[RMDB]
RNA sequence: GGGAACGACUCGAGUAGAGUCGAAAAACCAUUCGUUCGCGAAUGGUAAAAAGAUAUGGAUUCGUAUGUUCUUUUGACGCUCCGUGGUCGGAAACGACCAUACGGAGCGAUAAGAACACGAAUCCUAAGUCAAAAAAUCCAAGUUUCGACUUGGAAAGAUCAAAUAUUUGUUCGCAAAUAUUUGAUCAAAAGAAACAACAACAACAAC
Reactivity to 2A3 in 0.01 (KOAc 150mM, MgCl2 10mM, bicine 150mM(pH8.5), 24C), signal-to-noise 3, nucleotides 027 to 156: a000c000c000a000u000u000c010g060u030u060c260g000c010g180a000a000u010g000g000u060a070a090a000a010a000g020a010u040a030u060g000g000a000u000u000c000g010u070a160u230g010u030u000c020u050u100u080u160g190a110c120g010c000u010c000c010g020u010g000g000u000c010g000g020a040a060a040c000g000a000c010c000a000u050a010c000g000g000a000g000c000g000a000u000a000a000g000a000a000c010a000c000g000a000a000u000c000c000u000a030a000g020u000c070a000a060a000a110a010a090u060c050c020a010a020g060u040u100u140c190g050a040c000u010u000g020g000a060a020a030
Reactivity to DMS in 0.01 (KOAc 150mM, MgCl2 10mM, bicine 150mM(pH8.5), 24C), signal-to-noise 1, nucleotides 027 to 156: a040c000c000a020u000u010c010g040u000u000c300g090c000g020a050a000u020g010g010u000a010a040a070a070a070g000a020u000a200u010g000g010a040u000u000c000g060u020a070u010g060u000u000c000u000u020u000u000g000a300c040g070c000u010c000c000g010u000g000g010u020c000g000g020a080a080a210c070g000a010c020c000a030u000a030c090g060g000a010g100c000g020a000u000a000a000g030a020a010c020a010c020g000a000a000u000c010c000u010a000a090g020u000c020a000a020a080a110a100a150u000c010c000a020a040g020u000u010u010c230g020a120c000u000u030g020g000a000a070a140
Source: RMDB library RNAMAK, as collected in RNAgym. Chemical mapping of a 207-nucleotide RNA with 2A3 and DMS. For 2A3 the reverse transcriptase was SuperScript II with manganese. For DMS the reverse transcriptase was MarathonRT. The 2A3 profile rests on 3,097 reads. Conditions: 150 mM KOAc, 10 mM MgCl2 and 150 mM bicine (pH 8.5), 24 C.